The record gives the reactivity of an RNA of 207 nucleotides to 2A3. Values cover nucleotides 27 to 156. 2A3 is a SHAPE reagent: it acylates the 2'-hydroxyl of flexible nucleotides of all four kinds.

RNA sequence: GGGAACGACUCGAGUAGAGUCGAAAAGGGUAGUUUCGACUACCCAAAUCCUAAGUCGGUCCCGUUUGACGUUCAUGGGAGCUGAUACUCGGAAACGAGUAAUAGCGAAGAACAUGAACCGAGGGACCGAUAUGGAAAACACUGGCUUCGGCCAGUGGGUUGCGCAUAGUUUCGACUAUGCGCAACCAAAAGAAACAACAACAACAAC
Reactivity to 2A3 in 0.01 (KOAc 150mM, MgCl2 10mM, bicine 150mM(pH8.5), 24C), signal-to-noise 1, nucleotides 027 to 156: g000g010g000u000a000g010u100u020u300c210g100a010c000u000a000c000c010c000a000a010a010u000c000c000u000a020a020g010u000c020g030g010u000c000c010c000g000u220u140u130g070a090c070g000u000u000c000a000u020g020g010g040a040g030c010u040g070a100u040a070c000u010c000g040g070a050a040a020c010g000a000g020u000a020a090u040a030g010c030g100a170a050g050a080a020c000a000u000g010a010a030c040c030g030a070g010g000g000a000c000c000g000a000u000a000u000g000g020a000a190a000a000c000a000c040u060g000g010c000u020u070c300g100g000c010c010a010g000u020g000